[RMDB]
An RNA of 207 nucleotides, treated with 2A3 and read out base by base. The data come from the RNA Mapping Database (RMDB), library RNAMAK. Conditions: 150 mM KOAc, 10 mM MgCl2 and 150 mM bicine (pH 8.5), 24 C. Values cover nucleotides 27 to 156. The 2A3 profile rests on 684 reads.
RNA sequence: GGGAACGACUCGAGUAGAGUCGAAAAGAUAUGGACCAUGAGAACGAAAUGAUCAGGCUUGGAUUUACGACGUCGGAAACGACGUCGUUGUCAGCCUGGCAUUUCGACAUGGUCCUAAGUCAAAACGCCCAUACACUGUUCGCAGUGUAUGGGCGAACUGGAUAGCUGUGUUCGCACAGCUAUCCAGAAAAGAAACAACAACAACAAC
Reactivity to 2A3 in 0.01 (KOAc 150mM, MgCl2 10mM, bicine 150mM(pH8.5), 24C), signal-to-noise 1, nucleotides 027 to 156: g000a010u180a050u180g000g000a010c000c000a030u030g020a040g150a220a090c050g050a000a000a000u300g030a300u110c030a010g000g000c010u140u300g140g000a030u250u300u170a000c000g000a000c000g000u020c000g030g090a060a060a080c000g010a010c030g000u000c000g000u000u000g000u010c000a000g000c000c000u000g000g000c000a000u000u010u000c000g000a010c000a000u000g020g000u000c000c000u000a010a000g040u000c020a000a000a000a180c010g000c010c010c000a000u000a000c000a000c000u040g070u120u120c290g000c080a000g000u000g000u000a000u010g000g000g000c000g000a010a020